[RMDB]
RNA sequence: GGGAACGACUCGAGUAGAGUCGAAAAACUUUGAUGGCGGUACUAUGAAUUGAUGCAAGGUGUGGAGCGACCUUAAACAGUUCUGGUGGUGCUCUUAAUGGAGUGCUCUACUGAGAUUAUAAAAUAGCAUGCAUAGAGUGCUUCGGCACUCUAUGAACAACUAAUCCAGGUUCGCCUGGAUUAGUUGAAAAGAAACAACAACAACAAC
Reactivity to 2A3 in 0.01 (KOAc 150mM, MgCl2 10mM, bicine 150mM(pH8.5), 24C), signal-to-noise 8, nucleotides 027 to 156: a000c050u100u060u110g050a060u060g030g010c030g010g050u050a030c010u050a070u160g040a050a050u070u050g040a060u060g070c050a020a020g020g000u020g010u050g030g020a020g020c020g010a020c000c000u050u080a070a070a020c020a060g010u040u020c010u030g020g010u030g010g080u020g010c010u010c010u040u110a080a060u200g030g000a030g020u040g020c010u010c010u040a030c020u040g030a020g020a100u090u130a090u200a110a080a080a040u150a040g110c080a050u110g020c000a000u010a000g000a000g000u000g000c000u020u020c070g020g000c000a000c000u000c000u000a000u000g000a000a010
Reactivity to DMS in 0.01 (KOAc 150mM, MgCl2 10mM, bicine 150mM(pH8.5), 24C), signal-to-noise 1, nucleotides 027 to 156: a110c040u000u010u060g000a070u020g020g020c010g030g000u000a050c040u000a110u000g010a030a090u000u000g000a090u000g030c110a110a040g000g000u000g030u010g020g010a040g020c030g020a130c050c020u000u000a020a080a140c050a100g030u000u000c050u000g070g020u000g000g030u000g010c010u000c030u000u000a060a100u010g020g000a130g010u000g020c030u000c030u000a050c010u030g010a100g000a140u010u000a110u000a110a060a070a100u000a060g000c070a050u010g060c000a040u000a010g010a050g030u000g000c030u010u010c300g030g000c000a000c000u000c000u000a010u000g000a040a160